[RMDB]
RNA sequence: GGGAACGACUCGAGUAGAGUCGAAAAACAAUAGGUAAGAUUAGAUGGGUGUACAGAGGGGUAACAGGACUACGGAGACUUUUAGAUCUAGUCUGCAUGGGAACCUUAGGACUUCCCUACAAGCUGACCUUACCUCUCUUUUCGAAGAGAGGUAAGGAAAAGAAACAACAACAACAAC
Reactivity to DMS in 0.01 (KOAc 150mM, MgCl2 10mM, bicine 150mM(pH8.5), 24C), signal-to-noise 4, nucleotides 027 to 126: a100c090a100a090u010a050g010g000u000a070a050g000a150u000u010a060g000a100u000g000g000g020u010g020u010a070c090a100g010a090g010g010g010g020u000a070a070c140a080g010g000a090c050u000a060c140g020g000a100g010a090c090u010u020u000u010a100g000a070u000c110u010a040g010u000c010u010g010c080a060u000g010g010g010a050a060c050c040u000u000a090g010g000a080c180u000u000c010c000c000u010a060c170a050a120g010c060u000g000a160
Reactivity to 2A3 in 0.01 (KOAc 150mM, MgCl2 10mM, bicine 150mM(pH8.5), 24C), signal-to-noise 2, nucleotides 027 to 126: a010c100a050a080u090a120g010g030u070a060a090g040a150u080u100a050g060a110u070g030g000g050u070g010u080a050c060a040g050a030g020g000g000g000u000a040a020c020a050g060g000a010c030u060a050c060g080g020a080g040a060c010u060u100u090u220a080g000a100u030c010u010a010g030u010c000u020g020c030a070u080g070g000g000a020a030c000c000u020u050a080g050g000a040c040u030u010c010c000c010u030a010c040a060a020g030c040u060g030a050